[RMDB]
RNA sequence: GGGAACGACUCGAGUAGAGUCGAAAACCUACUCAAUACGUCCUCGUCGUACAGAACGGUAACAUGUUUUCCGAACAUCCGCGCUUAGGUAUACGAGUAUACACCUUACCCAACCCUCGCCAACGGGAGUGCAUCCACGAGUUCGCUCGUGGAUGAACACGUGACUGAUAUUCGUAUCAGUCACGUGAAAAGAAACAACAACAACAAC
Reactivity to DMS in 0.01 (KOAc 150mM, MgCl2 10mM, bicine 150mM(pH8.5), 24C), signal-to-noise 3, nucleotides 027 to 156: c040c020u010a070c090u000c020a090a140u010a060c030g010u000c010c010u000c030g020u020c100g010u010a120c060a080g000a050a100c020g000g000u000a060a120c110a060u000g010u000u000u010u020c050c020g010a090a090c020a080u000c010c040g000c020g000c040u000u000a020g010g040u000a090u000a070c060g010a110g010u010a140u010a090c050a050c040c020u000u010a070c030c010c020a060a050c050c020c000u000c090g030c020c050a100a120c090g000g020g010a120g040u000g010c000a020u000c010c000a000c010g010a050g050u010u000c300g060c000u000c000g060u010g000g010a000u000g010a030a140
Reactivity to 2A3 in 0.01 (KOAc 150mM, MgCl2 10mM, bicine 150mM(pH8.5), 24C), signal-to-noise 9, nucleotides 027 to 156: c000c000u020a050c030u050c070a080a110u070a170c060g040u030c000c010u020c010g040u020c020g000u040a060c020a060g070a130a020c020g000g040u100a100a040c070a140u110g030u030u040u090u060c060c060g020a030a010c020a060u050c020c020g050c010g020c070u100u130a050g030g030u050a040u020a050c060g010a010g040u040a020u040a050c070a050c020c040u090u150a090c030c010c010a030a050c030c000c010u030c040g060c050c030a080a060c050g040g000g010a050g030u100g030c000a000u000c000c000a000c000g010a000g000u060u090c180g040c100u000c000g000u010g000g000a000u000g000a000a000